[RMDB]
RNA sequence: GGGAACGACUCGAGUAGAGUCGAAAAUUGUAAGGCAGCAAGAAUGGAAGCAACGCCCAGGUUGAUACUGCAGAAAGUCUAAGUGAGAGAUAAUAGUAUCCAGACUAGAGUGGUGGCAGUACAGAGUGAGAGAAGUGAAUGUAUUUAAGGCAUGUCACGAUGACUACUGGUUCGCCAGUAGUCAUCGAAAAGAAACAACAACAACAAC
Reactivity to 2A3 in 0.01 (KOAc 150mM, MgCl2 10mM, bicine 150mM(pH8.5), 24C), signal-to-noise 2, nucleotides 027 to 156: u110u090g050u060a000a040g010g000c000a000g040c010a040a050g040a140a060u130g030g000a000a020g010c020a040a000c020g040c050c000c000a010g000g060u000u050g030a080u120a130c030u040g060c010a010g150a010a080a000g050u040c040u100a050a060g050u080g080a060g000a020g020a060u050a110a010u040a160g050u040a010u000c040c010a010g020a090c030u030a010g020a010g070u040g030g000u020g010g000c000a000g000u050a030c010a010g080a010g030u100g050a010g000a000g010a090a010g030u020g030a040a020u090g000u070a080u100u170u070a030a030g010g000c050a000u110g060u160c030a000
Reactivity to DMS in 0.01 (KOAc 150mM, MgCl2 10mM, bicine 150mM(pH8.5), 24C), signal-to-noise 1, nucleotides 027 to 156: u000u000g050u000a090a040g040g050c050a080g000c040a170a100g010a110a080u000g000g010a120a140g000c000a040a110c010g030c030c020c000a110g050g000u010u000g020a090u000a010c020u000g060c100a160g040a080a120a130g000u000c030u000a070a120g120u010g000a110g000a080g010a080u010a020a150u000a180g010u000a030u000c030c060a190g020a110c020u000a170g000a080g010u000g010g040u010g010g020c010a070g030u000a070c080a060g000a070g020u000g010a100g010a040g020a150a060g000u000g030a130a140u000g000u000a050u000u020u000a100a120g040g000c000a070u000g020u010c060a090
The record gives the reactivity of an RNA of 207 nucleotides to 2A3 and DMS.
The reactions ran in a buffer of 150 mM KOAc, 10 mM MgCl2 and 150 mM bicine (pH 8.5), at 24 C.
For 2A3 the reverse transcriptase was SuperScript II with manganese.
For 2A3, 1,050 sequencing reads were counted.